[RMDB]
RNA sequence: GGGAACGACUCGAGUAGAGUCGAAAAGCCGAUGAAUUGCCGAAAAGCCUGGCUCGAAAUCGUCGACGCAUCGACGACGGUCCUGCCAUGAGACCGUAACGAGGACAUGUCGCCUCGAAUGGCGUCGUAUAACAUGAGUGGUUCGCCACUCAUGUAAGUAUCUAUAGCACUUCGGUGCUAUAGAUACAAAAGAAACAACAACAACAAC
Reactivity to 2A3 in 0.01 (KOAc 150mM, MgCl2 10mM, bicine 150mM(pH8.5), 24C), signal-to-noise 5, nucleotides 027 to 156: g050c020c020g020a030u090g030a070a160u220u130g030c020c010g070a080a050a060a060g060c060c090u080g040g000c020u020c090g070a090a100a040u010c000g010u010c010g010a040c050g000c160a120u070c010g010a000c010g000a010c000g000g000u000c000c020u040g030c000c000a040u040g020a010g010a060c000c010g010u070a000a010c010g000a000g010g010a030c060a130u240g050u210c100g010c020c000u010c000g020a010a010u010g010g040c020g020u060c020g000u050a090u030a260a000c000a000u000g000a000g000u000g030g020u070u050c120g020c060c000a010c000u000c010a000u000g000u000a000a000
Reactivity to DMS in 0.01 (KOAc 150mM, MgCl2 10mM, bicine 150mM(pH8.5), 24C), signal-to-noise 2, nucleotides 027 to 156: g030c010c030g020a090u010g000a090a090u000u020g000c000c020g000a080a090a130a190g040c010c040u000g020g000c010u000c020g000a090a050a080u010c030g000u000c010g050a030c090g030c070a120u000c020g000a010c000g010a030c000g010g010u000c010c010u000g050c010c200a110u020g010a040g010a040c010c050g030u020a040a050c020g010a030g040g020a100c050a130u000g020u000c030g000c000c010u000c020g000a060a050u000g020g010c040g050u010c030g030u010a110u000a100a040c000a000u000g010a010g050u010g000g020u010u010c300g010c010c000a000c000u000c000a000u010g010u010a020a160
The data come from the RNA Mapping Database (RMDB), library M2RFPK. The record gives the reactivity of an RNA of 207 nucleotides to 2A3 and DMS. Values cover nucleotides 27 to 156. For DMS the reverse transcriptase was MarathonRT. For DMS, 3,973 sequencing reads were counted. Conditions: 150 mM KOAc, 10 mM MgCl2 and 150 mM bicine (pH 8.5), 24 C.